Structure probing data (DMS and 2A3) for a 207-nucleotide construct. For 2A3, 2,285 sequencing reads were counted. It was measured as part of the RMDB library M2RFPK. DMS adducts were read by reverse transcription with MarathonRT. For DMS, 2,410 sequencing reads were counted. High 2A3 reactivity points to a flexible backbone, as in loops and unpaired stretches. Reactivities are rounded to 0.1 and cut off at 0 and 3. Reactivities are given for positions 27 through 156.

RNA sequence: GGGAACGACUCGAGUAGAGUCGAAAAAGGUGAUUUCUCCUGCACCUUUAUCAAUGGAGGAACUCGACUUUGCUGUGGGUCCCAAAGGGACCUAAGGUGCAGACAGUUACCGGCGGUGAAGUGUGAGCAUAGGUUCGUGUCUUCGGACACGAACCAACUAUUGACUCUGCUUCGGCAGAGUCAAUAGAAAAGAAACAACAACAACAAC
Reactivity to DMS in 0.01 (KOAc 150mM, MgCl2 10mM, bicine 150mM(pH8.5), 24C), signal-to-noise 1, nucleotides 027 to 156: a040g010g050u000g010a300u000u000u000c000u010c020c000u020g030c040a000c010c010u000u000u000a070u010c300a050a110u020g000g010a210g070g000a030a040c020u000c020g010a020c000u010u000u010g020c010u000g030u020g000g000g010u000c000c000c000a050a100a210g030g030g010a000c010c000u000a010a020g030g010u000g000c000a120g010a090c160a130g010u010u000a020c020c010g000g020c050g030g070u000g000a030a040g060u000g000u010g010a020g050c120a170u000a050g010g020u010u000c000g040u000g000u000c010u010u000c300g020g020a010c000a000c000g000a000a020c010c000a010a040
Reactivity to 2A3 in 0.01 (KOAc 150mM, MgCl2 10mM, bicine 150mM(pH8.5), 24C), signal-to-noise 3, nucleotides 027 to 156: a000g000g020u000g000a020u030u070u040c010u010c000c020u100g050c020a000c000c000u100u180u100a070u050c070a050a050u300g010g010a020g010g010a040a040c000u000c020g020a020c000u010u010u050g000c000u020g030u110g020g000g000u010c000c030c000a200a120a130g010g000g000a000c000c000u010a010a030g000g000u010g000c000a020g120a300c040a030g020u030u070a020c000c020g070g000c010g000g000u020g030a010a020g040u080g040u080g120a020g020c090a080u130a200g000g010u010u000c000g000u000g000u000c000u030u070c250g080g000a000c000a000c000g000a000a000c000c000a000a000